[RMDB]
RNA sequence: GGGAACGACUCGAGUAGAGUCGAAAAUCGGACACGACCCGAAACCGGAUGAUCUAGACAUGGGCAAGACGAAGCGUGCCGAAAGGCACGUGGAGGUCUGCUAGCGUUGGUGUCCUACAAUACCCUCAACUCUGGAUCGAUUCGUCGAUCCAGAGUUAAAAGAAACAACAACAACAAC
Reactivity to DMS in 0.01 (KOAc 150mM, MgCl2 10mM, bicine 150mM(pH8.5), 24C), signal-to-noise 3, nucleotides 027 to 126: u020c190g010g000a060c020a000c000g000a110c070c020c020g000a050a160a140c150c040g000g010a120u020g000a090u020c100u010a080g050a070c100a090u060g020g010g000c090a030a030g030a020c000g000a300a130g000c000g040u010g010c000c000g020a090a070a030g000g000c010a000c010g030u010g010g000a290g010g000u000c000u000g030c030u010a090g040c140g040u010u010g000g020u000g000u010c000c010u000a030c190a060a030u020a170c010c010c000u000c290
Reactivity to 2A3 in 0.01 (KOAc 150mM, MgCl2 10mM, bicine 150mM(pH8.5), 24C), signal-to-noise 3, nucleotides 027 to 126: u080c010g000g000a000c010a010c010g050a030c010c010c010g020a130a120a040c110c040g010g010a050u100g010a040u120c090u130a060g060a130c000a060u080g090g000g000c080a100a080g020a000c010g030a000a010g000c010g000u000g000c000c000g080a090a040a000g000g020c000a000c010g010u000g000g000a020g040g180u020c000u000g000c000u000a070g020c010g040u010u010g100g020u010g000u000c000c000u020a060c030a050a040u070a110c000c000c020u060c060